[RMDB]
RNA sequence: GGGAACGACUCGAGUAGAGUCGAAAAAGAAUGCACCACAGCGUAAAAUCAUCUGAUUGGGUGAGUUGGUCGCACCGCCAUUUGACGAACGAACGCCAAGCCUAACCCGUCUUUGUGCAUUAAGUGGAAAAGGAGCCCCAGUUCGCUGGGGCUCCAAACUUGAAUGGAGUUUCGACUCCAUUCAAGUAAAAGAAACAACAACAACAAC
Reactivity to DMS in 0.01 (KOAc 150mM, MgCl2 10mM, bicine 150mM(pH8.5), 24C), signal-to-noise 1, nucleotides 027 to 156: a060g000a100a040u000g010c040a060c000c070a120c060a100g000c050g000u000a090a070a070a080u000c060a090u000c010u000g030a090u000u000g010g010g030u000g010a150g030u010u010g030g000u020c050g050c010a040c070c030g040c000c010a240u010u000u010g000a000c040g000a170a090c000g010a050a070c030g020c050c010a010a230g000c030c010u000a070a120c030c010c070g010u010c040u000u000u000g050u010g020c030a060u010u000a020a090g000u010g030g000a120a070a080a210g010g010a010g020c060c010c030c000a020g020u010u000c170g000c040u050g010g010g050g030c010u030c010c000a010a000